Background: The record gives the reactivity of an RNA of 177 nucleotides to 2A3 and DMS. It was measured as part of the RMDB library OK2TRN. Reactivities are given for positions 27 through 126. The reactions ran in a buffer of 150 mM KOAc, 10 mM MgCl2 and 150 mM bicine (pH 8.5), at 24 C.

RNA sequence: GGGAACGACUCGAGUAGAGUCGAAAAAAGAGCACCCUGGAGACCAAGGCGGCUGAGCUGGAGGCGCGCUGCGCUGGGUAUGCUGGGGCGCUGCAGCGGGCGGAGCGCGAGGCCGUGGCCGACAAGGCCCAAAGUGGAAUUUCGAUUCCACUUUGGGAAAAGAAACAACAACAACAAC
Reactivity to 2A3 in 0.01 (KOAc 150mM, MgCl2 10mM, bicine 150mM(pH8.5), 24C), signal-to-noise 4, nucleotides 027 to 126: a000a000g140a030g000c050a050c000c000c020u030g040g050a080g020a050c020c010a050a020g090g000c030g020g020c040u080g030a030g030c030u060g080g050a040g060g080c030g010c000g020c060u090g010c040g000c020u070g020g090g140u150a080u210g030c030u050g010g050g010g000c060g000c040u080g000c000a010g020c060g060g020g000c020g040g040a050g020c040g000c010g020a040g020g070c020c010g030u070g010g010c000c010g020a060c030a060a030g050g010
Reactivity to DMS in 0.01 (KOAc 150mM, MgCl2 10mM, bicine 150mM(pH8.5), 24C), signal-to-noise 6, nucleotides 027 to 126: a050a060g000a110g000c050a100c030c010c020u000g010g010a140g010a100c030c030a080a180g010g010c010g010g000c030u000g000a140g020c050u000g010g010a200g010g010c020g010c030g020c030u000g000c030g020c020u010g000g010g010u010a040u010g020c020u000g010g010g010g010c050g000c030u000g020c040a030g010c020g000g010g000c020g010g000a150g000c030g010c030g010a170g000g010c020c020g030u000g010g010c000c000g020a080c100a080a130g010g000